An RNA of 207 nucleotides, treated with 2A3 and read out base by base. The reactions ran in a buffer of 150 mM KOAc, 10 mM MgCl2 and 150 mM bicine (pH 8.5), at 24 C.

[RMDB]
RNA sequence: GGGAACGACUCGAGUAGAGUCGAAAAGAUAUGGACCGUACACCACUGAUGACCGUGGGUGUUUGCCCACUCGGAAACGAGUGGGUGAUACCCACGCAAGGUGGGUACGGUCCUAAGUCAAAACGACCAAUAUACGCUUCGGCGUAUAUUGGUCGAACACACUGAACCGUUUCGACGGUUCAGUGUGAAAAGAAACAACAACAACAAC
Reactivity to 2A3 in 0.01 (KOAc 150mM, MgCl2 10mM, bicine 150mM(pH8.5), 24C), signal-to-noise 1, nucleotides 027 to 156: g020a010u030a040u070g000g000a000c000c000g000u000a020c240a260c020c020a010c010u080g060a290u090g020a160c030c000g020u000g000g000g000u010g060u010u030u070g010c000c000c000a000c000u000c000g030g000a000a050a000c010g000a000g000u000g000g000g000u000g010a000u000a000c000c000c000a000c000g000c000a010a040g000g000u000g010g000g000u000a000c000g010g020u000c000c000u000a020a000g020u000c000a020a000a030a070c000g000a000c000c000a010a000u000a000u000a010c000g000c000u030u080c280g090g000c000g010u000a000u000a010u000u000g020g000u000c000g010a000a000